[RMDB]
Structure probing data (DMS and 2A3) for a 177-nucleotide construct.
The reactions ran in a buffer of 150 mM KOAc, 10 mM MgCl2 and 150 mM bicine (pH 8.5), at 24 C.
Reactivities are rounded to 0.1 and cut off at 0 and 3.
Values cover nucleotides 27 to 126.
For 2A3, 1,027 sequencing reads were counted.

RNA sequence: GGGAACGACUCGAGUAGAGUCGAAAAGACGAACGAAAACACAAAUCUUCCACGGUGCAGAAGGGUCCCUCACAUGAGGAUCACCCAUGUAACUCGGACAGGAUAUGCUUUUGGGAAAAAGAGAGAAAGUGAACUUCGAAUUCGUUCGAAGUUCACUAAAAGAAACAACAACAACAAC
Reactivity to DMS in 0.01 (KOAc 150mM, MgCl2 10mM, bicine 150mM(pH8.5), 24C), signal-to-noise 1, nucleotides 027 to 126: g040a110c090g000a160a080c040g000a040a000a060a100c060a030c030a080a080a020u020c010u020u000c000c070a210c100g000g000u000g000c010a030g000a160a130g010g010g010u000c170c000c020u000c040a170c220a100u060g000a030g000g000a060u010c190a000c010c000c010a070u000g010u000a040a040c030u000c090g000g010a080c280a070g010g020a050u000a060u000g000c010u010u000u000u000g010g040g000a130a030a060a040a000g000a090g010a140g000a060a040
Reactivity to 2A3 in 0.01 (KOAc 150mM, MgCl2 10mM, bicine 150mM(pH8.5), 24C), signal-to-noise 1, nucleotides 027 to 126: g050a020c050g020a100a000c020g040a010a010a080a000c100a010c040a060a160a060u010c030u100u020c030c010a010c020g000g000u020g030c000a010g040a300a080g090g000g010u000c030c020c000u030c010a230c030a200u300g000a010g000g010a020u120c050a020c000c000c000a000u050g000u020a090a020c000u000c070g030g010a020c050a030g020g020a060u040a070u130g030c050u090u060u030u020g010g050g000a010a120a010a080a000g070a000g040a010g070a000a120